[RMDB]
RNA sequence: GGGAACGACUCGAGUAGAGUCGAAAAGGAUGGAAGCAGAGGCUGGUAGCCGACGUCCAUGCCAGCCACCAACUCAGAGCCAGCACACUACCCGCAUGUGCCUCUGCCAAUGAGUGGAUGAAAAGCACUUGAGUUUGUAAUUCGUUACAAACUCAAGAAAAGAAACAACAACAACAAC
Reactivity to DMS in 0.01 (KOAc 150mM, MgCl2 10mM, bicine 150mM(pH8.5), 24C), signal-to-noise 7, nucleotides 027 to 126: g000g000a060u010g010g010a110a090g020c070a070g000a280g020g010c010u000g010g010u010a090g020c030c040g000a120c090g010u000c030c050a090u000g010c020c010a050g010c040c020a100c050c040a060a080c080u000c030a050g000a140g020c130c180a080g010c050a040c060a040c110u010a120c050c040c050g020c170a150u010g010u000g010c020c040u010c030u000g010c060c090a080a080u000g000a090g010u000g000g000a080u000g010a070a080a100a130g000c180a150
Reactivity to 2A3 in 0.01 (KOAc 150mM, MgCl2 10mM, bicine 150mM(pH8.5), 24C), signal-to-noise 3, nucleotides 027 to 126: g030g010a020u040g000g050a090a040g080c050a050g040a050g130g010c010u070g110g150u130a040g020c020c020g050a070c010g020u000c010c000a020u070g050c010c000a000g020c000c010a020c010c010a060a090c020u040c040a000g000a000g090c040c040a020g020c040a010c010a010c040u180a090c010c020c010g020c090a060u090g010u020g030c000c000u000c020u020g000c020c030a060a080u090g020a040g050u020g010g030a030u070g080a030a050a040a040g040c040a020

This 177-nucleotide RNA was probed chemically with DMS and 2A3. The 2A3 profile rests on 6,090 reads.